[RMDB]
RNA sequence: GGGAACGACUCGAGUAGAGUCGAAAACGCGGGAUUUACAGAGACGAAGGCGCAGCGUCUCUGAUCUGCGCCACCGCGGAAAGCAGAACGAGCUGCCACUCGAAGUAUGACUUCGGUCAUGCGAAAAGGGAUGGUCGGACUUCGGUCCGACUAUCCCAAAAGAAACAACAACAACAAC
Reactivity to 2A3 in 0.01 (KOAc 150mM, MgCl2 10mM, bicine 150mM(pH8.5), 24C), signal-to-noise 1, nucleotides 027 to 126: c000g010c000g010g000g000a000u060u030u190a100c050a030g080a010g000a040c000g010a090a010g020g020c000g000c020a040g000c010g020u000c020u000c030u010g040a060u000c000u040g010c000g010c000c000a020c000c020g000c000g030g010a040a000a000g010c020a000g010a070a000c000g000a020g010c030u020g020c040c030a010c020u000c030g000a010a010g000u020a000u000g000a000c000u010u020c150g000g000u000c020a000u000g020c000g020a000a010a030a000
Reactivity to DMS in 0.01 (KOAc 150mM, MgCl2 10mM, bicine 150mM(pH8.5), 24C), signal-to-noise 2, nucleotides 027 to 126: c020g000c080g010g000g010a180u000u000u000a090c000a090g000a040g000a020c000g000a010a090g000g010c080g010c070a140g000c010g010u000c000u000c040u000g000a000u010c110u000g000c030g030c040c020a060c000c000g000c000g000g010a100a120a110g000c060a100g000a060a090c060g000a040g030c070u020g020c000c020a090c070u000c010g010a270a060g010u000a000u000g000a020c000u000u050c110g040g000u020c000a000u000g000c000g000a050a040a160a120